[RMDB]
RNA sequence: GGGAACGACUCGAGUAGAGUCGAAAACUAACUGUAAUACUAGUUCCUUAGCUUAUUACGAACCUGUGCAGGGUCGUAAAAUGCUGAUGGCUCUUCUUUCUGAUAAUGCCUAUCUCAAAUGGGCGCGUAAUCACGAACUUCGGUUCGUGAAAAAGAAACAACAACAACAAC
Reactivity to 2A3 in 0.01 (KOAc 150mM, MgCl2 10mM, bicine 150mM(pH8.5), 24C), signal-to-noise 7, nucleotides 027 to 129: c020u060a020a060c050u090g150u260a060a050u080a220c150u070a030g030u050u050c020c000u010u010a000g000c000u050u060a040u050u000a110c000g000a070a190c010c000u080g060u140g170c150a090g040g020g000u000c000g020u000a000a000a020a000u100g000c010u020g020a070u110g030g000c010u020c020u110u020c010u040u150u030c040u070g070a080u040a230a040u180g000c000c000u050a050u010c120u000c180a030a060a070u060g020g010g000c010g000c030g060u060a100a030
Reactivity to DMS in 0.01 (KOAc 150mM, MgCl2 10mM, bicine 150mM(pH8.5), 24C), signal-to-noise 5, nucleotides 027 to 129: c050u050a060a070c140u050g000u070a090a020u000a130c160u050a050g000u010u000c020c000u000u000a030g020c000u020u030a260u000u000a040c000g000a090a050c070c000u000g050u130g050c190a060g020g000g070u010c040g000u020a010a000a030a020u070g000c000u000g020a050u000g000g000c080u020c050u050u050c050u030u050u030c060u000g000a120u040a130a040u090g000c050c010u080a000u020c110u060c290a030a060a040u010g030g030g000c050g040c020g000u060a100a110